This 177-nucleotide RNA was probed chemically with DMS and 2A3. It was measured as part of the RMDB library OK2TST. For DMS the reverse transcriptase was MarathonRT.
RNA sequence: GGGAACGACUCGAGUAGAGUCGAAAAUCAGAUCGGGGAGUACAUCCGCGAGGCCACCGGGUAGCGGGAUGCCGACGGAGCGCGUGUGCCUGGCCGGCAGGCGCCUGAGACGAUGAACGCAUGCGGACCAAGGACGGUAAUUCGUUACCGUCCUUGGAAAAGAAACAACAACAACAAC
Reactivity to DMS in 0.01 (KOAc 150mM, MgCl2 10mM, bicine 150mM(pH8.5), 24C), signal-to-noise 2, nucleotides 027 to 126: u020c080a080g020a140u010c060g020g000g000g010a050g010u000a120c140a110u000c020c040g010c030g000a100g040g040c060c060a130c100c040g010g010g000u000a110g020c060g000g000g020a080u000g010c020c020g010a070c030g010g000a150g000c080g020c070g020u000g010u010g010c020c020u010g000g010c110c090g000g010c030a040g000g000c050g000c040c000u000g010a120g000a080c150g010a050u010g000a090a140c080g020c070a060u000g010c070g000g000a220
Reactivity to 2A3 in 0.01 (KOAc 150mM, MgCl2 10mM, bicine 150mM(pH8.5), 24C), signal-to-noise 1, nucleotides 027 to 126: u060c000a020g050a160u080c080g040g000g040g000a060g010u100a070c040a120u050c020c020g070c040g020a030g070g010c010c010a050c010c030g070g020g040u060a060g080c020g000g100g010a070u110g000c000c020g010a030c020g060g010a120g000c030g000c020g050u150g050u070g050c000c000u010g050g030c000c030g010g000c000a050g010g000c020g040c020c010u070g030a040g010a060c050g080a080u110g040a060a000c010g040c020a020u160g030c040g020g010a020